[RMDB]
RNA sequence: GGGAACGACUCGAGUAGAGUCGAAAACUUCUACCUGGCGUUGCCGGCGUUGGCAUACCUACUGUUGGUGCUCGUCUGCCGGCGGCGAUGGCAGCCCAGGUUGCUGUUGGCCACCAUGGCGGGGCUGCCUGGUAUAGCGGUUCGCCGCUAUACCAGGAAAAGAAACAACAACAACAAC
Reactivity to DMS in 0.01 (KOAc 150mM, MgCl2 10mM, bicine 150mM(pH8.5), 24C), signal-to-noise 3, nucleotides 027 to 126: c130u000u000c060u010a050c040c020u000g010g010c050g010u010u000g020c010c000g010g010c020g010u000u000g020g010c020a090u010a060c020c040u000a110c220u010g020u010u000g020g020u000g000c170u010c140g010u000c040u000g040c000c000g010g020c020g000g010c010g000a120u000g000g000c000a010g010c020c000c010a140g000g000u000u000g010c040u000g020u010u000g000g020c010c020a100c070c050a120u010g020g030c090g010g000g030g000c070u000g010
Reactivity to 2A3 in 0.01 (KOAc 150mM, MgCl2 10mM, bicine 150mM(pH8.5), 24C), signal-to-noise 2, nucleotides 027 to 126: c050u140u030c040u080a130c010c010u050g110g000c020g020u030u010g030c000c000g020g000c010g170u240u150g000g000c020a020u090a170c010c020u050a090c100u290g200u300u110g070g010u050g040c060u060c180g070u030c090u100g000c000c030g000g000c010g000g000c000g010a040u030g040g000c000a010g000c000c000c000a010g060g000u010u030g020c070u050g040u190u150g070g030c040c000a030c030c030a190u180g200g060c120g020g000g000g000c000u000g020
About this RNA
Structure probing data (DMS and 2A3) for a 177-nucleotide construct. 2A3 adducts were read by reverse transcription with SuperScript II with manganese. In probing experiments dimethyl sulfate is read out at A N1 and C N3, which are open when not base-paired. The reactions ran in a buffer of 150 mM KOAc, 10 mM MgCl2 and 150 mM bicine (pH 8.5), at 24 C. It was measured as part of the RMDB library OK2TST. For DMS, 5,123 sequencing reads were counted.